[RMDB]
RNA sequence: GGGAACGACUCGAGUAGAGUCGAAAAGCUAGGGAGCGCACGAUGCCAGUGCCCUGACGUCUAGGCAGCGUCUCAACUAGUCUGAGUCAAUUAAAACGCUCGCGGUGAAGUACGGGACUAGUACACAGUGUUAGCACUAGUUCGCUGGUGUUAACACAAAAGAAACAACAACAACAAC
Reactivity to DMS in 0.01 (KOAc 150mM, MgCl2 10mM, bicine 150mM(pH8.5), 24C), signal-to-noise 7, nucleotides 027 to 126: g010c020u000a070g000g010g020a130g020c060g000c090a060c070g000a120u010g020c030c040a070g020u000g000c020c020c020u010g000a060c070g000u010c040u020a100g030g000c050a010g010c040g010u010c020u010c070a090a070c030u000a040g010u020c010u000g010a020g020u000c040a050a050u020u020a130a140a240a290c300g000c040u010c000g010c100g000g000u010g000a210a150g000u020a030c040g000g000g000a000c000u000a000g000u000a010c020a010c030a010
Reactivity to 2A3 in 0.01 (KOAc 150mM, MgCl2 10mM, bicine 150mM(pH8.5), 24C), signal-to-noise 6, nucleotides 027 to 126: g040c030u040a020g010g030g010a090g010c030g000c010a020c020g050a030u080g000c000c020a020g010u010g010c010c000c000u010g010a020c020g030u030c030u030a040g010g030c010a000g010c020g040u020c010u010c030a030a070c010u030a010g040u020c020u010g020a010g020u030c010a010a040u090u110a120a110a040a000c090g000c020u020c010g040c050g040g000u090g070a140a040g040u050a020c010g010g000g000a010c000u010a010g010u000a020c020a000c010a030